[RMDB]
RNA sequence: GGGAACGACUCGAGUAGAGUCGAAAAGUAGAGGUGGUUUCGACCACCUCUACAAAAAGAUAUGGAUGAAAGCAACAGCUAACUGUGGUCGGAAACGACCAUUUAGACAUGCUUAAAUCCUAAGUCAAAAACUGGAAUCACUUCGGUGAUUCCAGAACAUCUUUAAUGUGUUCGCACAUUAAAGAUGAAAAGAAACAACAACAACAAC
Reactivity to DMS in 0.01 (KOAc 150mM, MgCl2 10mM, bicine 150mM(pH8.5), 24C), signal-to-noise 3, nucleotides 027 to 156: g020u000a010g040a000g020g030u010g010g010u000u000u000c250g010a060c010c000a010c000c000u000c010u000a020c000a010a080a120a120a110g000a110u000a170u000g010g000a050u000g000a300a090a020g030c000a070a120c130a230g090c020u010a010a000c300u000g040u000g020g000u000c000g050g010a150a070a260c010g040a020c000c010a010u010u000u010a050g020a090c040a300u000g000c020u010u000a050a290a020u000c010c000u000a070a170g020u000c020a060a050a030a160a160c000u020g010g000a040a010u000c010a000c000u010u000c300g070g010u000g020a020u000u000c000c010a020g000a040a100
Reactivity to 2A3 in 0.01 (KOAc 150mM, MgCl2 10mM, bicine 150mM(pH8.5), 24C), signal-to-noise 4, nucleotides 027 to 156: g000u010a010g000a000g000g020u030g010g020u040u120u110c120g020a010c000c000a000c000c000u010c000u000a000c000a000a000a000a000a000g010a010u010a010u020g000g000a010u010g030a080a090a000g020c010a010a160c070a240g100c070u060a010a040c080u060g000u010g070g010u000c010g000g030a020a020a030c000g000a000c000c000a000u000u000u000a010g010a050c060a140u060g000c000u000u000a030a070a000u000c000c000u020a060a010g020u020c040a040a010a030a100a170c000u000g000g000a000a000u000c000a010c000u030u080c270g060g000u000g010a010u000u000c000c000a000g000a000a000

Structure probing data (DMS and 2A3) for a 207-nucleotide construct. For 2A3, 4,485 sequencing reads were counted. Source: RMDB library RNAMAK, as collected in RNAgym. Values cover nucleotides 27 to 156. High DMS reactivity at an A or C suggests that its Watson-Crick edge is free. DMS adducts were read by reverse transcription with MarathonRT. The RNA was probed in 150 mM KOAc, 10 mM MgCl2 and 150 mM bicine (pH 8.5) at 24 C. 2A3 adducts were read by reverse transcription with SuperScript II with manganese.